[RMDB]
RNA sequence: GGGAACGACUCGAGUAGAGUCGAAAAAUGUUUGUACACUUAAUUAUGAAGGCGGCUCAGGUUAUGUAAAAUCAGUAUAUUGUUUGGGCAAACAAAUGUACUGUCGUUUAAUUUCUAUCAUGUUAAGUCCAAACAAUGUCUUGGCUGGUGAAAGUAGACCUUAGGAUAUCUUCGGAUAUCCUAAGGUAAAAGAAACAACAACAACAAC
Reactivity to 2A3 in 0.01 (KOAc 150mM, MgCl2 10mM, bicine 150mM(pH8.5), 24C), signal-to-noise 3, nucleotides 027 to 156: a000u070g050u070u070u090g020u050a020c030a000c040u050u080a040a110u160u120a110u190g030a020a050g040g000c050g000g000c060u030c040a020g050g000u060u080a050u110g020u070a060a080a030a080u060c040a020g040u040a020u000a000u080u000g030u010u000u000g000g020g010c000a040a070a000c010a000a100a030u090g030u060a020c090u100g090u120c070g010u000u120u100a050a070u030u140u000c050u050a100u160c010a020u060g030u010u050a070a010g000u000c000c010a000a030a020c010a000a000u020g040u000c060u020u040g050g020c030u050g000g040u000g060a110a020a010g070u160a030g090
Reactivity to DMS in 0.01 (KOAc 150mM, MgCl2 10mM, bicine 150mM(pH8.5), 24C), signal-to-noise 2, nucleotides 027 to 156: a080u010g010u000u000u010g010u000a060c040a040c030u000u000a080a110u000u010a090u010g000a060a050g040g020c030g010g000c020u000c030a080g000g020u000u000a040u010g030u010a080a050a120a090u000c050a060g000u020a050u000a020u000u000g010u000u000u000g000g080g000c040a180a050a040c030a020a050a100u000g040u000a020c040u000g000u000c110g000u000u000u020a060a090u000u000u000c120u000a150u000c060a100u000g030u010u000a030a070g030u000c020c000a020a030a030c030a020a010u010g000u010c070u000u000g040g020c030u000g000g020u010g010a040a050a110g000u000a190g000

An RNA of 207 nucleotides, treated with 2A3 and DMS and read out base by base. DMS adducts were read by reverse transcription with MarathonRT. The RNA was probed in 150 mM KOAc, 10 mM MgCl2 and 150 mM bicine (pH 8.5) at 24 C. Reactivities are rounded to 0.1 and cut off at 0 and 3. For 2A3 the reverse transcriptase was SuperScript II with manganese.